An RNA of 177 nucleotides, treated with DMS and read out base by base. For DMS, 1,397 sequencing reads were counted. It was measured as part of the RMDB library TTRDES. The RNA was probed in 150 mM KOAc, 10 mM MgCl2 and 150 mM bicine (pH 8.5) at 24 C.
[RMDB]
RNA sequence: GGGAACGACUCGAGUAGAGUCGAAAAAAAAGAUAUGGAGCGAGUGGAGAGCUCCAGAGCGUUUGACGUGCUCGGAAACGAGCACCGAGCUCUGAGAGCUCGAUGAAACUCGCUCCUAAGUCAAAAACAAAGGAAUGGAGUUCGCUCCAUUCCUUUGAAAAGAAACAACAACAACAAC
Reactivity to DMS in 0.01 (KOAc 150mM, MgCl2 10mM, bicine 150mM(pH8.5), 24C), signal-to-noise 2, nucleotides 027 to 126: a080a090a100a080g000a080u000a300u010g000g000a030g000c010g020a070g000u000g000g000a080g000a040g010c000u000c010c000a010g000a010g040c000g030u000u020u000g020a170c300g010u000g000c020u000c000g000g000a120a060a190c040g000a010g000c000a010c000c010g000a180g010c000u000c000u000g000a180g010a010g000c010u000c000g000a070u010g000a110a190a020c020u000c010g000c020u010c010c010u000a010a040g000u020c010a110a100a060a090a190